[RMDB]
RNA sequence: GGGAACGACUCGAGUAGAGUCGAAAACAGAACGCUCGACGGGAAGGCUGGAAUCGCAAAAUCUCACGAGAUUGCUUUCCCAGUCAGUCCGCCGCCUUCGAAAAUCCUAUCUCAAAAGGAGGCCAGCACUAGGUUAUAGAUUCGUCUAUAACCUAGUAAAAGAAACAACAACAACAAC
Reactivity to DMS in 0.01 (KOAc 150mM, MgCl2 10mM, bicine 150mM(pH8.5), 24C), signal-to-noise 9, nucleotides 027 to 126: c140a150g010a050a040c160g010c080u010c060g020a030c020g010g010g010a050a030g010g010c010u000g000g000a030a010u000c080g010c010a020a020a070a210u000c010u000c250a140c250g000a020g000a280u000u000g000c000u000u000u000c020c000c000a020g000u000c010a050g020u000c010c010g020c010c020g010c250c070u000u000c040g000a080a070a090a110u000c020c010u000a060u000c070u010c100a080a070a100a110g010g000a060g010g010c070c150a050g010c150
Reactivity to 2A3 in 0.01 (KOAc 150mM, MgCl2 10mM, bicine 150mM(pH8.5), 24C), signal-to-noise 8, nucleotides 027 to 126: c040a020g070a080a010c050g020c050u080c080g060a040c010g020g000g010a050a020g010g000c000u010g010g030a010a010u030c020g000c010a020a040a050a140u020c050u030c030a050c100g010a010g010a030u000u020g000c000u010u000u000c010c000c000a000g000u000c000a000g020u000c000c010g010c020c020g010c000c010u030u030c020g050a070a040a040a080u040c020c020u070a120u100c100u030c080a120a160a040a040g060g010a010g010g030c020c020a030g040c030
An RNA of 177 nucleotides, treated with DMS and 2A3 and read out base by base. The 2A3 profile rests on 24,142 reads. 2A3 adducts were read by reverse transcription with SuperScript II with manganese. Source: RMDB library OK2TST, as collected in RNAgym.